[RMDB]
RNA sequence: GGGAACGACUCGAGUAGAGUCGAAAAGACAGAAUUUUCAGUAGCAUGUAAAUUGUUUAGCACCGUGGUCUCAGGAAUACUAUAUUCACUUUUUAUGAUGCAGUAUUAGUCAUAAAUGUUAAAUGUUUUACAUUUUACUAUCAAGUGAAAAUUAAUACUCGUCGUGAUUAUUCGUAAUCACGACGAGAAAAGAAACAACAACAACAAC
Reactivity to 2A3 in 0.01 (KOAc 150mM, MgCl2 10mM, bicine 150mM(pH8.5), 24C), signal-to-noise 1, nucleotides 027 to 156: g110a010c070a010g240a020a070u070u080u120u160c040a000g010u040a000g010c020a000u020g000u030a020a020a020u010u070g020u000u080u050a010g030c010a000c000c070g120u050g040g040u140c060u010c270a140g060g050a060a050u070a060c010u050a060u070a130u300u000c000a020c040u030u190u000u040u000a070u090g000a010u030g030c060a000g020u130a120u100u130a150g010u040c000a010u030a090a030a000u020g020u030u020a020a020a020u010g020u020u120u050u070a000c000a000u000u000u100u050a000c030u090a040u150c030a130a020g020u020g120a020a090a000a000u200u140a030a210u130a120
Structure probing data (2A3) for a 207-nucleotide construct. 2A3 adducts were read by reverse transcription with SuperScript II with manganese. Source: RMDB library OK3TST, as collected in RNAgym. For 2A3, 418 sequencing reads were counted.